Chemical mapping of a 177-nucleotide RNA with DMS and 2A3. The data come from the RNA Mapping Database (RMDB), library OK2TST. The DMS profile rests on 803 reads.

[RMDB]
RNA sequence: GGGAACGACUCGAGUAGAGUCGAAAAAGCGUUUACUAUCACGACUUUUCAUCGAAGCUUUCUGCAACGCGAUAUUGAAGGUGUACAGCAGACAAUGCGCGAACUUGCGGAUAAGGUUGGCGCUGAGAGUGAGGCAUACGUUCGCGUAUGCCUCACUAAAAGAAACAACAACAACAAC
Reactivity to DMS in 0.01 (KOAc 150mM, MgCl2 10mM, bicine 150mM(pH8.5), 24C), signal-to-noise 1, nucleotides 027 to 126: a020g000c020g040u010u010u000a040c130u000a140u000c120a150c100g010a100c010u020u000u000u000c100a140u010c010g010a080a060g010c120u000u000u000c010u000g010c020a040a050c000g010c020g010a070u000a050u000u000g020a080a140g000g000u000g050u000a070c210a150g000c010a040g000a100c060a050a000u000g000c010g000c000g010a060a050c190u000u000g010c020g000g030a020u000a070a080g010g010u000u000g010g000c030g000c000u010g020a040g000
Reactivity to 2A3 in 0.01 (KOAc 150mM, MgCl2 10mM, bicine 150mM(pH8.5), 24C), signal-to-noise 1, nucleotides 027 to 126: a040g040c030g020u010u070u080a040c040u030a020u080c030a000c130g110a210c110u080u100u110u140c120a150u110c000g050a050a000g030c020u040u080u000c040u000g040c020a030a030c000g000c020g130a140u020a010u190u120g040a100a070g060g010u070g020u120a100c110a030g060c000a000g050a090c020a040a000u060g010c020g000c010g000a040a000c030u070u050g000c070g030g020a090u050a170a070g000g000u050u040g030g000c010g020c030u030g010a060g000
2A3 adducts were read by reverse transcription with SuperScript II with manganese.
The reactions ran in a buffer of 150 mM KOAc, 10 mM MgCl2 and 150 mM bicine (pH 8.5), at 24 C.